An RNA of 177 nucleotides, treated with 2A3 and read out base by base. Values cover nucleotides 27 to 126.
[RMDB]
RNA sequence: GGGAACGACUCGAGUAGAGUCGAAAAGACGCCUGUGUGGCGAAGCGAGCAAUGGGAUAAGCCGCAAUAGAAGAUGAGAUGGAAGCGGCAAGAUAGAAUGCUCGCAACAAGAUCCAUCUCACAGAGACCCUGCACCUAUCUUCGGAUAGGUGCAGGGAAAAGAAACAACAACAACAAC
Reactivity to 2A3 in 0.01 (KOAc 150mM, MgCl2 10mM, bicine 150mM(pH8.5), 24C), signal-to-noise 1, nucleotides 027 to 126: g000a000c000g040c000c000u190g190u160g230u300g150g000c000g030a010a010g000c000g000a000g000c000a180a090u040g010g000g220a150u180a230a090g000c000c000g000c000a000a090u170a220g150a160a020g230a120u120g000a060g000a000u040g000g000a300a000g000c000g000g000c000a000a080g010a000u160a000g090a130a000u010g000c000u090c000g000c000a010a010c060a000a060g090a000u020c000c000a000u000c000u030c000a000c010a000g180a000g000a000

The reactions ran in a buffer of 150 mM KOAc, 10 mM MgCl2 and 150 mM bicine (pH 8.5), at 24 C.
The 2A3 profile rests on 556 reads.
It was measured as part of the RMDB library OK1LIB.